RNA sequence: GGGAACGACUCGAGUAGAGUCGAAAAAACUCGCCAACACCAACUGGGAGUUCUACGCUCCGUACGAGCAUGAGUCUCCUGAGGUCAAGGAGUUCUCUGCUGACCAGGAGAAGACGGAGGACAAAUACAAGGCAACUGAAUUCGUUCAGUUGCCUUGAAAAGAAACAACAACAACAAC
Reactivity to DMS in 0.01 (KOAc 150mM, MgCl2 10mM, bicine 150mM(pH8.5), 24C), signal-to-noise 3, nucleotides 027 to 126: a040a080c010u010c010g030c010c000a040a150c100a100c250c180a130a100c210u010g000g000g000a030g000u000u000c030u000a100c120g020c010u000c010c030g000u000a040c110g000a040g010c050a070u010g000a070g000u000c000u000c000c010u000g000a150g010g010u000c150a110a100g000g000a030g020u010u000c070u000c020u000g010c030u010g000a120c050c080a110g010g010a070g020a110a070g000a030c000g000g010a020g000g000a120c100a030a050a070u010a130
Reactivity to 2A3 in 0.01 (KOAc 150mM, MgCl2 10mM, bicine 150mM(pH8.5), 24C), signal-to-noise 1, nucleotides 027 to 126: a000a000c050u060c070g260c050c000a060a020c050a050c120c070a010a110c060u040g050g000g000a060g000u000u000c040u090a200c030g010c010u020c000c020g050u070a070c100g010a030g000c030a080u270g030a010g010u000c000u010c000c000u060g050a090g040g200u120c060a050a020g000g000a010g040u160u020c050u000c010u070g010c030u020g020a120c040c040a080g090g070a070g020a020a070g060a000c060g030g010a000g010g010a010c080a050a080a000u260a010